[RMDB]
Annotation: The record gives the reactivity of an RNA of 177 nucleotides to 2A3. The RNA was probed in 150 mM KOAc, 10 mM MgCl2 and 150 mM bicine (pH 8.5) at 24 C.

RNA sequence: GGGAACGACUCGAGUAGAGUCGAAAAAACAUGAUGAACACAAAACUCUUGUCAAGAUCAGAGUUUAUCACAGGGCAAAGCUCGUUGAAGCAUGGAUUCCAAGAGCACCCAGAGCACUACCCUACACCCGUGAAGGACUCUUCGGAGUCCUUCACGGAAAAGAAACAACAACAACAAC
Reactivity to 2A3 in 0.01 (KOAc 150mM, MgCl2 10mM, bicine 150mM(pH8.5), 24C), signal-to-noise 2, nucleotides 027 to 126: a010a010c060a070u120g010a050u110g100a160a020c040a000c050a100a080a140a110c060u000c020u080u160g110u180c110a160a100g010a140u060c000a000g000a050g000u020u000u070a080u050c060a130c120a160g050g000g010c030a000a300a000g070c000u000c020g080u110u080g120a090a020g010c000a010u150g170g060a080u000u100c030c030a000a060g040a000g010c000a030c050c000c000a000g000a000g000c000a020c050u050a040c110c010c010u070a010c040a030c000